[RMDB]
An RNA of 177 nucleotides, treated with DMS and 2A3 and read out base by base. The reactions ran in a buffer of 150 mM KOAc, 10 mM MgCl2 and 150 mM bicine (pH 8.5), at 24 C. For DMS the reverse transcriptase was MarathonRT. The DMS profile rests on 1,262 reads. The 2A3 profile rests on 1,940 reads.
RNA sequence: GGGAACGACUCGAGUAGAGUCGAAAAACACGAGGUGACUGCGCUCCUCAGACAGGGCCAUAAGCGCCUCCUCAUGCUCACCGGUGAGUCCGAGGAGAGCCCGCUCGACUACUUCAUCGAGGGUCUCCAGCUACGCUGAAUUCGUUCAGCGUAGCUGAAAAGAAACAACAACAACAAC
Reactivity to DMS in 0.01 (KOAc 150mM, MgCl2 10mM, bicine 150mM(pH8.5), 24C), signal-to-noise 2, nucleotides 027 to 126: a060c120a100c110g010a020g020g030u000g000a150c070u000g020c080g000c040u000c010c000u000c080a060g020a100c170a150g020g000g030c060c070a070u020a090a090g000c060g000c070c040u010c010c020u000c020a150u010g020c000u000c020a120c100c190g000g010u000g030a100g000u000c290c120g000a060g010g000a060g000a090g020c040c030c000g000c120u000c020g000a050c010u000a090c050u000u000c040a120u010c000g000a030g010g010g010u000c010u000c000
Reactivity to 2A3 in 0.01 (KOAc 150mM, MgCl2 10mM, bicine 150mM(pH8.5), 24C), signal-to-noise 2, nucleotides 027 to 126: a010c100a020c070g060a060g050g040u030g050a050c080u070g030c040g000c030u070c000c020u050c020a020g060a050c100a030g020g020g000c060c030a130u070a220a030g020c010g000c050c010u000c010c000u040c010a050u130g020c010u030c020a050c050c060g190g020u060g010a020g030u050c060c060g010a010g040g000a050g000a000g000c000c010c030g040c010u020c010g030a030c010u240a180c000u080u080c030a300u000c040g000a000g000g050g020u000c010u010c000